Chemical mapping of a 177-nucleotide RNA with DMS and 2A3. High DMS reactivity at an A or C suggests that its Watson-Crick edge is free. For 2A3 the reverse transcriptase was SuperScript II with manganese. For DMS, 2,299 sequencing reads were counted. Values cover nucleotides 27 to 126. It was measured as part of the RMDB library RFM100.

[RMDB]
RNA sequence: GGGAACGACUCGAGUAGAGUCGAAAAAGAUAAAUAAUUCGCCUACUUGUUUGAAAAUGCCUCACCGUUUUCCGAAUGUUGUAUGUUUAUUCAGAAACAUCCAGACAUGGUCCGGCCCAUCAGAUGAUGGUGUUGGAAAAUUCGUUUUCCAACACCAAAAAGAAACAACAACAACAAC
Reactivity to DMS in 0.01 (KOAc 150mM, MgCl2 10mM, bicine 150mM(pH8.5), 24C), signal-to-noise 2, nucleotides 027 to 126: a180g030a190u010a070a100a120u020a080a210u010u020c000g040c000c020u020a060c030u020u000g030u010u030u020g000a060a030a070a100u000g000c000c030u000c110a020c030c000g030u000u000u010u000c000c000g000a070a090u050g000u000u000g000u010a060u000g000u010u000u010a120u040u030c050a000g050a100a020a070c020a000u000c070c060a050g000a040c130a030u000g000g000u000c020c030g030g000c010c030c020a020u030c090a090g020a040u050g000a120
Reactivity to 2A3 in 0.01 (KOAc 150mM, MgCl2 10mM, bicine 150mM(pH8.5), 24C), signal-to-noise 2, nucleotides 027 to 126: a000g070a030u200a070a050a020u120a140a130u030u080c000g010c010c010u020a030c000u050u030g080u100u000u070g020a000a000a060a060u140g020c000c000u000c000a010c030c030g020u000u020u050u000c000c000g060a000a030u100g000u000u000g010u010a180u020g050u010u030u020a250u030u090c000a000g150a070a010a000c020a000u000c000c000a010g060a100c060a070u040g030g000u040c040c110g040g000c040c000c000a030u000c000a000g050a090u060g000a010